[RMDB]
RNA sequence: GGGAACGACUCGAGUAGAGUCGAAAAACUUGCUUAUACUAUGAGAAUUGCUCCUGGGUCACCACUGCUGUGGCAUGAUGAGCCUGUAGUCAUCUCAUGAAAUAACAGUAAUCCUUUGGGAGGCCGAGGCAGGGAGAUCACCAGGUCAAGGGAUCGACAGCCUAUUAGGAUUCGUCCUAAUAGGCUGAAAAGAAACAACAACAACAAC
Reactivity to 2A3 in 0.01 (KOAc 150mM, MgCl2 10mM, bicine 150mM(pH8.5), 24C), signal-to-noise 3, nucleotides 027 to 156: a000c040u090u060g010c010u110u130a100u050a240c120u090a140u260g020a040g050a050a060u080u020g000c010u010c020c010u000g050g000g000u020c000a000c040c010a160c080u040g000c040u010g060u220g080g000c050a040u160g020a070u050g020a050g070c020c000u090g050u070a020g060u040c030a130u010c090u000c020a030u070g080a080a120a060u180a050a030c030a020g030u060a050a160u060c010c010u110u050u090g060g000g010a000g030g000c020c060g000a020g000g000c010a010g000g020g000a050g010a020u050c000a030c070c000a000g010g000u010c020a000a030g050g020g010a020u040c020g000a010
Reactivity to DMS in 0.01 (KOAc 150mM, MgCl2 10mM, bicine 150mM(pH8.5), 24C), signal-to-noise 2, nucleotides 027 to 156: a110c020u000u000g000c050u010u000a230u010a170c060u010a070u000g020a170g000a100a120u000u000g010c020u010c010c010u000g000g000g000u000c040a070c020c010a020c030u000g020c000u030g020u000g030g020c010a110u000g040a050u000g010a160g000c060c010u000g010u000a110g000u020c060a130u000c010u000c060a060u020g000a020a060a060u000a060a090c030a100g020u020a050a130u000c000c050u000u020u010g050g020g000a120g050g010c010c010g000a100g010g030c030a070g000g000g010a170g030a030u000c020a060c020c000a140g020g030u000c030a030a040g000g020g010a100u000c010g010a270
Chemical mapping of a 207-nucleotide RNA with 2A3 and DMS. For 2A3, 1,306 sequencing reads were counted. For DMS the reverse transcriptase was MarathonRT. High DMS reactivity at an A or C suggests that its Watson-Crick edge is free. The data come from the RNA Mapping Database (RMDB), library OK3TST.